[RMDB]
RNA sequence: GGGAACGACUCGAGUAGAGUCGAAAAAAAACCAAAGAAGGCGGUGUUCUCGUCUCUGGCGGUUUCGAUGGCCGCACUCGGCUUGUGUACUACAGAGAGGACACGAGUGGGAUCGUGGUGACGUUCGCGGAGGAAUGAACUUCGGUUCAUUCCUCCGAAAAGAAACAACAACAACAAC
Reactivity to DMS in 0.01 (KOAc 150mM, MgCl2 10mM, bicine 150mM(pH8.5), 24C), signal-to-noise 1, nucleotides 027 to 126: a030a020a000a030c000c000a040a160a100g010a070a100g030g000c070g030g000u010g000u010u020c090u000c080g010u000c060u060c040u010g020g020c240g020g010u000u020u000c080g010a110u010g020g000c040c000g000c180a100c050u000c000g020g020c010u000u000g020u000g020u000a010c030u000a180c100a120g000a170g000a040g030g000a080c010a030c030g010a070g010u010g010g000g000a040u000c140g010u010g010g060u000g000a140c090g000u010u000c120g030

Chemical mapping of a 177-nucleotide RNA with DMS. Values are in units of 0.01, from 0 to 300, in steps of 10. For DMS, 768 sequencing reads were counted. Reactivities are given for positions 27 through 126. For DMS the reverse transcriptase was MarathonRT. The RNA was probed in 150 mM KOAc, 10 mM MgCl2 and 150 mM bicine (pH 8.5) at 24 C.